[RMDB]
RNA sequence: GGGAACGACUCGAGUAGAGUCGAAAAAAAUCUCGUGAUGGCUGUGCCUGUCAGUUACGUGGAGCUUUGCCCAGGGAUUUCCUGAGCCUGCUGGAUUUACAGGGAUAUUUGGCCAUCUGAGGAUAAACAUUAUCAAGCAGUUCGCUGCUUGAUAAUGAAAAGAAACAACAACAACAAC
Reactivity to DMS in 0.01 (KOAc 150mM, MgCl2 10mM, bicine 150mM(pH8.5), 24C), signal-to-noise 2, nucleotides 027 to 126: a040a060a050u010c010u000c010g020u000g020a010u000g000g010c020u000g030u020g000c000c000u010g010u000c070a040g000u000u010a080c140g010u020g020g000a100g000c140u000u010u000g020c010c010c000a040g010g010g010a220u010u010u010c000c000u010g000a040g010c000c120u010g000c010u000g010g000a010u000u000u000a010c010a020g000g000g000a070u000a150u000u010u010g010g010c010c000a020u000c000u000g000a030g000g000a090u010a080a100a130
Reactivity to 2A3 in 0.01 (KOAc 150mM, MgCl2 10mM, bicine 150mM(pH8.5), 24C), signal-to-noise 3, nucleotides 027 to 126: a000a000a000u030c010u010c010g070u050g020a000u000g000g050c020u020g030u090g240c020c000u030g030u000c020a010g000u000u020a110c040g040u050g070g070a110g020c030u170u190u180g040c050c010c010a020g110g040g020a300u120u130u240c000c020u000g010a000g000c000c010u000g040c000u070g050g000a020u010u000u020a010c020a010g030g000g020a010u030a100u200u150u140g040g000c000c000a010u000c000u020g000a000g010g010a020u080a030a020a010